Structure probing data (2A3 and DMS) for a 177-nucleotide construct. The RNA was probed in 150 mM KOAc, 10 mM MgCl2 and 150 mM bicine (pH 8.5) at 24 C. It was measured as part of the RMDB library OK1LIB. Values cover nucleotides 27 to 126. Values are in units of 0.01, from 0 to 300, in steps of 10. DMS adducts were read by reverse transcription with MarathonRT. The DMS profile rests on 2,002 reads.
[RMDB]
RNA sequence: GGGAACGACUCGAGUAGAGUCGAAAAGCGUCGAUGCUAGGGAUAAAAUAAACACACGAACUCUCUCAGACCUAGCAUCGAUAGCGGAAACGCGGAUGAGAGAGAAGGUGUGGAGAUAAAAUAAAAAGGGAUUUGAUAAGUUCGCUUAUCAAAUCCCAAAAGAAACAACAACAACAAC
Reactivity to 2A3 in 0.01 (KOAc 150mM, MgCl2 10mM, bicine 150mM(pH8.5), 24C), signal-to-noise 3, nucleotides 027 to 126: g030c030g020u000c000g010a000u000g000c010u000a010g000g030g050a020u130a090a220a080a040u300a030a200a000c040a000c000a000c010g060a300a110c160u000c020u020c000u000c010a030g010a090c000c000u000a000g000c010a000u000c000g000a000u010a000g010c030g030g060a070a080a030c110g010c100g140g030a080u000g010a020g000a000g000a000g000a050a050g110g000u010g000u010g050g000a050g000a030u300a000a140a060a000u200a030a080a020a010a020
Reactivity to DMS in 0.01 (KOAc 150mM, MgCl2 10mM, bicine 150mM(pH8.5), 24C), signal-to-noise 1, nucleotides 027 to 126: g010c060g000u000c000g000a000u000g000c020u040a000g000g000g020a080u010a070a080a110a140u040a100a090a160c070a000c010a000c010g000a100a170c000u000c040u000c000u020c010a080g000a150c000c000u000a000g000c000a000u000c010g000a000u030a000g010c000g000g010a040a030a100c010g010c040g020g010a140u000g000a010g000a000g010a060g040a010a110g050g010u000g000u000g000g000a100g000a130u080a060a080a040a070u060a080a020a100a110a220